[RMDB]
RNA sequence: GGGAACGACUCGAGUAGAGUCGAAAACGCUGGGAGGGUGCCAGCGUCAACAGCAAGUUUGAGCUGUGCUGAAGCGCGCACGGCACAGCAAUGAUGACUUGACAUGACGCGGUAAUUCCCUCCUGUGCUGAAGCGCGCACGGCAACCGAAAGGUGCGGUUUCAUUACUAGUUCGCUAGUAAUGAAACAAAAGAAACAACAACAACAAC
Reactivity to DMS in 0.01 (KOAc 150mM, MgCl2 10mM, bicine 150mM(pH8.5), 24C), signal-to-noise 2, nucleotides 027 to 156: c060g050c020u010g020g020g000a030g010g050g060u000g010c020c000a170g110c020g040u000c000a040a090c080a170g000c000a040a060g010u000u000u000g010a030g060c000u020g040u000g010c000u010g020a070a100g050c020g040c020g070c000a300c010g000g000c010a040c000a030g010c020a070a090u000g000a100u000g010a020c010u000u010g000a100c050a300u010g010a020c040g030c010g000g000u000a110a200u000u010c020c000c030u000c010c000u000g000u000g010c010u020g000a070a100g010c000g040c000g010c000a300c050g030g010c010a090a110c000c010g000a100a110a140g000g000u010g030c020g010
Reactivity to 2A3 in 0.01 (KOAc 150mM, MgCl2 10mM, bicine 150mM(pH8.5), 24C), signal-to-noise 4, nucleotides 027 to 156: c040g000c030u070g000g000g010a010g010g010g020u060g020c050c050a120g020c040g000u010c010a210a190c030a080g090c000a010a000g000u020u030u030g010a010g000c000u000g000u010g000c000u020g030a250a060g000c000g000c000g000c020a020c010g000g000c000a010c000a010g000c030a060a160u060g020a010u030g000a000c000u020u010g040a060c040a230u160g000a000c010g000c010g000g010u050a090a140u200u150c000c000c000u000c000c000u000g000u010g000c000u040g020a100a030g000c000g000c000g000c000a010c010g040g000c020a040a050c000c010g040a080a030a030g020g010u040g000c030g010